Source: RMDB library TTRDEL, as collected in RNAgym.
This 177-nucleotide RNA was probed chemically with 2A3 and DMS.
DMS adducts were read by reverse transcription with MarathonRT.
RNA sequence: GGGAACGACUCGAGUAGAGUCGAAAAGAUAUGGAUAGUGGGAGAUUAUCGGUCGGAAACGACCGUAAGAUCAUCGAUCACUAAUCCUAAGUCAAAAGUAGCAUAACCCUUCGGGGUUAUGCUACAAUCAUAUUUAGCACUUCGGUGCUAAAUAUGAAAAAGAAACAACAACAACAAC
Reactivity to 2A3 in 0.01 (KOAc 150mM, MgCl2 10mM, bicine 150mM(pH8.5), 24C), signal-to-noise 2, nucleotides 027 to 126: g000a020u060a010u120g000g000a000u010a020g030u010g000g020g020a070g000a020u020u040a030u110c020g000g000u000c000g000g040a070a070a060c020g010a020c000c010g000u040a050a040g040a040u060c040a010u060c030g000a010u080c000a000c010u020a050a110u000c000c000u030a120a020g040u020c020a020a060a100a110g010u000a000g000c010a000u000a010a000c010c010c000u040u100c300g020g010g000g000u000u000a000u000g000c000u000a000c000a000a000
Reactivity to DMS in 0.01 (KOAc 150mM, MgCl2 10mM, bicine 150mM(pH8.5), 24C), signal-to-noise 5, nucleotides 027 to 126: g000a060u000a280u000g010g010a020u000a010g020u000g010g000g010a300g000a020u000u010a130u010c000g020g000u000c000g000g000a080a090a110c010g010a010c000c010g010u000a020a110g010a090u000c140a040u000c040g010a300u010c000a020c000u000a050a080u000c000c000u010a040a120g010u000c040a120a070a120a150g010u000a000g000c000a000u010a000a010c000c000c000u000u010c180g030g000g010g000u000u000a000u000g000c000u000a000c000a010a080
Conditions: 150 mM KOAc, 10 mM MgCl2 and 150 mM bicine (pH 8.5), 24 C. Reactivities are rounded to 0.1 and cut off at 0 and 3.